[RMDB]
RNA sequence: GGGAACGACUCGAGUAGAGUCGAAAACAGUAAAAGUGGCAACAGUGGUGAUUAAAAGCCUGAUAGGGUGCUGCAGAGGCCCACUGUAUUGCUACUAAAGGUCUCUGCAGACGAUGAAAGACAUCGAACUGGUACCAUAGUUCGCUAUGGUACCAGUAAAAGAAACAACAACAACAAC
Reactivity to DMS in 0.01 (KOAc 150mM, MgCl2 10mM, bicine 150mM(pH8.5), 24C), signal-to-noise 3, nucleotides 027 to 126: c070a130g030u040a050a050a060a040g030u030g000g020c020a080a010c070a010g010u010g000g030u020g060a120u020u040a010a080a150a080g000c020c000u010g010a160u050a130g020g000g030u030g000c020u010g020c000a000g000a000g000g000c010c020c030a150c160u010g000u020a010u000u060g020c100u010a020c020u000a030a130a060g000g010u000c000u010c000u010g000c000a030g010a130c030g010a020u000g000a080a100a150g000a180c020a010u010c000g040a270
Reactivity to 2A3 in 0.01 (KOAc 150mM, MgCl2 10mM, bicine 150mM(pH8.5), 24C), signal-to-noise 2, nucleotides 027 to 126: c000a000g100u260a000a160a070a000g070u030g010g000c030a020a000c010a080g030u020g060g000u010g070a040u030u210a020a060a040a030g050c000c000u040g040a060u160a070g220g000g030u130g020c000u020g000c020a000g000a010g030g000c020c010c000a010c090u020g020u040a110u040u280g020c030u010a010c000u050a050a000a000g010g000u000c000u000c000u000g000c010a020g000a040c000g010a000u000g030a060a060a030g030a000c030a000u020c020g000a030